[RMDB]
RNA sequence: GGGAACGACUCGAGUAGAGUCGAAAAUUCGUCGAAUGACUAUUCAUCUAUUGUAUUUUCAUGCAAAUAUGGAGCAAGAAAACUCUAUGAAAAGAUGGUGGUUCAAUUCAAUGUUAUUUAAGACGGACCUAACUCCUAUCUUCGGAUAGGAGUUAGGAAAAGAAACAACAACAACAAC
Reactivity to DMS in 0.01 (KOAc 150mM, MgCl2 10mM, bicine 150mM(pH8.5), 24C), signal-to-noise 2, nucleotides 027 to 126: u010u010c010g000u000c000g000a040a000u010g000a050c010u000a040u020u010c000a020u020c000u040a130u010u000g010u040a000u000u010u010u020c120a040u010g020c000a010a100a150u020a040u020g010g000a040g010c060a090a100g030a080a110a040a100c010u010c010u000a030u040g000a100a040a130a070g000a000u000g000g010u000g020g000u020u020c080a030a070u000u000c050a060a090u000g000u010u020a050u020u000u010a070a100g000a050c000g000g010a110
Reactivity to 2A3 in 0.01 (KOAc 150mM, MgCl2 10mM, bicine 150mM(pH8.5), 24C), signal-to-noise 7, nucleotides 027 to 126: u030u010c010g010u010c030g020a030a050u030g010a000c010u020a050u210u270c040a000u000c010u070a110u050u050g040u040a050u040u200u070u160c180a040u050g030c020a010a080a040u190a080u120g050g020a030g000c090a100a090g190a200a140a030a030c020u020c000u030a060u050g120a100a070a040a020g010a000u010g000g030u010g000g020u100u160c080a070a110u050u030c010a050a090u150g080u190u120a130u060u100u100a070a020g010a000c000g000g020a010